Source information
Chemical mapping of a 177-nucleotide RNA with DMS and 2A3. It was measured as part of the RMDB library OK2TRN. The reactions ran in a buffer of 150 mM KOAc, 10 mM MgCl2 and 150 mM bicine (pH 8.5), at 24 C.
[RMDB]
RNA sequence: GGGAACGACUCGAGUAGAGUCGAAAAGUCGGUUCGUCACAGAUCAACAGGUCGGGAUCGUUGGCGAUCGCGAUGGCGAUCACCACGCGUUGGCGUUCGCCACCUGAAAGCUCAUGCGGAAACGCACUCAAUUGUGCCCAUUCGUGGGCACAAUUGAAAAAGAAACAACAACAACAAC
Reactivity to DMS in 0.01 (KOAc 150mM, MgCl2 10mM, bicine 150mM(pH8.5), 24C), signal-to-noise 2, nucleotides 027 to 126: g030u000c030g000g000u000u000c030g040u000c020a020c100a160g010a000u000c070a130a120c110a110g020g000u010c150g000g000g030a020u000c020g000u000u010g020g020c000g000a010u010c020g010c010g010a060u000g010g010c010g010a000u010c030a030c010c010a030c060g020c190g000u020u000g020g020c020g010u000u000c010g000c000c030a090c010c020u010g010a080a090a150g010c100u010c080a130u000g010c020g010g000a070a050a150c040g040c020a120c300
Reactivity to 2A3 in 0.01 (KOAc 150mM, MgCl2 10mM, bicine 150mM(pH8.5), 24C), signal-to-noise 2, nucleotides 027 to 126: g060u040c010g020g040u030u020c000g040u030c000a040c000a070g020a050u040c020a000a220c050a080g070g220u180c110g120g010g020a020u000c020g070u050u050g050g010c050g020a000u010c090g000c020g120a080u070g040g000c020g000a020u000c000a010c050c010a020c030g260c080g260u220u010g000g010c000g000u010u000c030g000c000c030a030c010c010u090g050a120a080a010g010c030u050c110a080u150g010c000g000g050a040a080a060c020g020c020a020c000